[RMDB]
RNA sequence: GGGAACGACUCGAGUAGAGUCGAAAACAAGCACAUUCUGAUGCUCACCCUGGGCGCCGCCGCGAUUGCAGCACUGCCGGCCAUCGCGCAGACCGCUCCGCCACAGGGGCAAGGCGCCAGCGCGCAGUCAACCAGAGUGUUUCGACACUCUGGUUGAAAAAGAAACAACAACAACAAC
Reactivity to 2A3 in 0.01 (KOAc 150mM, MgCl2 10mM, bicine 150mM(pH8.5), 24C), signal-to-noise 4, nucleotides 027 to 126: c050a000a030g030c020a010c010a100u230u140c080u200g150a210u040g000c010u020c030a110c010c010c030u050g040g000g000c020g000c020c040g030c020c000g000c010g010a010u000u050g000c010a010g010c020a030c160u090g010c010c010g070g000c010c000a000u020c000g000c000g000c010a020g050a090c030c100g000c010u020c000c020g020c040c090a180c030a060g000g010g000g000c020a040a050g010g000c010g020c000c020a020g010c020g000c010g000c000a000g040
Reactivity to DMS in 0.01 (KOAc 150mM, MgCl2 10mM, bicine 150mM(pH8.5), 24C), signal-to-noise 3, nucleotides 027 to 126: c190a130a070g010c040a030c050a150u050u010c090u000g000a100u000g010c000u000c090a130c040c020c000u020g000g000g000c000g000c010c000g030c090c000g030c010g000a030u020u010g010c020a040g020c020a120c080u030g000c030c020g000g000c020c040a030u010c000g040c010g020c030a140g010a100c210c060g020c000u010c000c030g000c110c170a180c130a030g010g010g000g030c010a110a110g000g000c010g000c010c000a070g000c180g000c070g000c000a060g000